[RMDB]
Description:
The record gives the reactivity of an RNA of 207 nucleotides to 2A3. Values cover nucleotides 27 to 156. Conditions: 150 mM KOAc, 10 mM MgCl2 and 150 mM bicine (pH 8.5), 24 C.
RNA sequence: GGGAACGACUCGAGUAGAGUCGAAAAGGGUGAGAUCUAGGAACCGUAGGGGUAUUCUCAAAGGAAGCUUUUGCAGUGACGCCCAUGUAAGUGGGAUAUAACAACAGAACUCGUAUGAGUAGCCUAAUAAAUCGGACCUUCUUCGGAAGGUCCGAAACUUACCUCCUGACUUCGGUCAGGAGGUAAGAAAAGAAACAACAACAACAAC
Reactivity to 2A3 in 0.01 (KOAc 150mM, MgCl2 10mM, bicine 150mM(pH8.5), 24C), signal-to-noise 1, nucleotides 027 to 156: g050g020g000u030g000a180g020a060u020c030u070a000g000g090a130a060c010c000g080u120a060g000g010g030g010u040a120u070u210c090u020c030a060a040a000g140g000a170a030g030c040u030u060u060u070g010c030a020g000u000g050a020c100g050c000c000c010a020u090g080u130a080a060g020u010g000g000g020a000u030a000u000a080a050c030a020a010c030a020g110a040a050c030u000c070g020u200a080u200g000a000g050u020a010g020c000c010u000a070a080u060a070a140a030u060c000g010g010a000c000c000u000u030c000u010u060c080g110g010a020a000g010g020u000c000c000g000a000a000a000